[RMDB]
RNA sequence: GGGAACGACUCGAGUAGAGUCGAAAAGAUAUGGAGAGGAAGGGACAUGAGGAUCGGAAACGAUACCCUCAACAGCCCUCCUCUCCUAAGUCAAAGUAAUGUGAAGGGUUCGCCCUUCACAUUACAAGUCCGUAUGACUGUUCGCAGUCAUACGGACAAAAGAAACAACAACAACAAC
Reactivity to 2A3 in 0.01 (KOAc 150mM, MgCl2 10mM, bicine 150mM(pH8.5), 24C), signal-to-noise 2, nucleotides 027 to 126: g000a010u040a030u120g010g000a000g050a000g010g070a110a260g110g000g030a040c070a300u130g000a010g000g020a020u010c010g030g050a050a010a020c000g010a000u190a210c030c060c000u030c020a040a090c110a040g030c000c000c010u000c000c010u000c010u000c000c000u000a010a000g000u000c030a000a070a060g000u000a020a010u000g010u000g040a010a030g000g040g050u090u220c270g210c010c000c010u030u010c010a010c010a010u000u000a000c000a000a000
Reactivity to DMS in 0.01 (KOAc 150mM, MgCl2 10mM, bicine 150mM(pH8.5), 24C), signal-to-noise 1, nucleotides 027 to 126: g000a040u000a300u040g000g000a040g020a010g000g000a110a020g000g000g010a030c070a240u000g000a020g030g000a040u000c000g010g000a080a060a120c010g000a010u010a110c260c000c010u000c000a010a030c250a160g000c010c000c000u000c000c000u030c020u000c000c000u000a000a020g000u000c020a100a140a110g010u000a000a000u000g010u020g000a030a000g030g020g000u000u030c300g000c000c000c010u000u000c000a000c000a000u000u020a010c000a070a140